Structure probing data (2A3) for a 207-nucleotide construct. The reactions ran in a buffer of 150 mM KOAc, 10 mM MgCl2 and 150 mM bicine (pH 8.5), at 24 C. It was measured as part of the RMDB library M2RFPK.
[RMDB]
RNA sequence: GGGAACGACUCGAGUAGAGUCGAAAAGAAAGAAAGAAAGCGGUUGGGUGGGUCCAUCGACCGUCGUGGCGUAUUCGGACGCUUUACCACGACGCGAGCAAAUAGCGAGACCGACCACCCCCUUUAACAGAGGUAUAGUAGUUCGCUACUAUACCAAUCAUGAUCGUGAGUUCGCUCACGAUCAUGAAAAAGAAACAACAACAACAAC
Reactivity to 2A3 in 0.01 (KOAc 150mM, MgCl2 10mM, bicine 150mM(pH8.5), 24C), signal-to-noise 1, nucleotides 027 to 156: g050a060a010a020g070a020a010a000g050a100a070a020g030c160g070g020u270u130g090g010g000u040g060g000g000u030c030c020a070u020c010g070a090c050c020g000u020c010g020u040g010g010c040g010u060a180u040u110c050g110g000a010c010g000c020u160u130u080a080c000c000a000c070g000a000c000g060c010g030a050g000c060a000a100a200u110a060g050c070g050a100g010a140c000c040g040a030c010c000a020c000c000c000c000c000u020u230u020a160a060c100a080g030a000g110g000u000a000u000a000g010u000a000g000u000u030c220g010c020u000a000c000u010a000u000a000c000c000a000a000